This 177-nucleotide RNA was probed chemically with DMS and 2A3.
RNA sequence: GGGAACGACUCGAGUAGAGUCGAAAAUAAAAGACACCCUUGGCAGAUGUCCUCCUCGUUGGUGGGUGUCGGUAAUGUUGUCUGUCACUGGCAACAGUUAACGAUCUGCCUAAAUAAAAAGAAAAAAGUAUUAGUUGUUCUUCGGAACAACUAAUACAAAAGAAACAACAACAACAAC
Reactivity to DMS in 0.01 (KOAc 150mM, MgCl2 10mM, bicine 150mM(pH8.5), 24C), signal-to-noise 1, nucleotides 027 to 126: u000a080a090a110a070g010a070c060a020c000c000c010u000u000g000g040c010a030g000a010u010g000u000c040c090u000c050c000u000c220g010u000u000g020g040u020g000g000g000u000g000u000c020g000g010u000a090a030u000g010u000u000g000u000c000u000g000u010c280a090c180u000g000g000c010a010a000c010a010g000u000u000a050a020c030g010a040u000c020u000g010c000c000u000a010a050a060u010a030a040a050a140a060g040a020a040a070a070a080a120
Reactivity to 2A3 in 0.01 (KOAc 150mM, MgCl2 10mM, bicine 150mM(pH8.5), 24C), signal-to-noise 1, nucleotides 027 to 126: u040a000a100a000a050g030a000c020a040c010c000c000u010u070g000g000c020a000g000a000u010g070u060c000c020u030c020c000u030c060g210u130u130g010g020u060g000g000g000u030g030u030c000g010g000u040a060a040u000g000u020u000g000u020c000u060g300u210c130a080c210u030g000g020c000a000a000c000a020g040u000u020a000a010c010g000a000u030c030u000g000c000c000u000a000a050a010u130a030a100a000a000a020g130a110a120a000a030a020a000

The data come from the RNA Mapping Database (RMDB), library M2PK90. Values cover nucleotides 27 to 126. The reactions ran in a buffer of 150 mM KOAc, 10 mM MgCl2 and 150 mM bicine (pH 8.5), at 24 C.